[RMDB]
RNA sequence: GGGAACGACUCGAGUAGAGUCGAAAAAGCAAGACACAGAAAGUUAAACGCAAAUUGCUGCAAAAUUCACCCUCAGUGGAGGACUAGAAACACAACAUGUCCAAUUUAAAGCUCAGUUCACAAGCAGCGUUGGUUCAUGAUUCGUCAUGAACCAACGAAAAGAAACAACAACAACAAC
Reactivity to DMS in 0.01 (KOAc 150mM, MgCl2 10mM, bicine 150mM(pH8.5), 24C), signal-to-noise 1, nucleotides 027 to 126: a000g040c020a000a090g000a020c280a120c100a140g000a020a030a020g020u010u000a090a130a180c120g000c110a020a030a100u010u000g000c080u000g000c160a040a030a060a040u010u010c020a100c010c010c020u000c030a120g010u020g030g010a120g000g000a050c010u000a080g020a060a030a080c100a070c130a010a020c080a070u010g020u000c030c000a100a210u010u000u020a010a050a050g000c010u000c070a060g050u000u000c000a050c100a050a090g020c110a120g010
Reactivity to 2A3 in 0.01 (KOAc 150mM, MgCl2 10mM, bicine 150mM(pH8.5), 24C), signal-to-noise 1, nucleotides 027 to 126: a010g030c080a060a000g040a020c010a000c010a080g100a020a060a050g020u050u140a090a190a000c060g000c020a040a070a070u050u070g000c030u000g000c000a020a000a190a060u070u030c040a100c000c010c010u010c000a040g030u080g070g020a040g010g010a010c020u000a060g080a090a100a020c100a000c020a050a020c000a010u080g010u060c030c070a000a020u240u160u140a160a070a010g010c020u000c030a080g050u100u010c020a000c040a040a020g020c040a030g010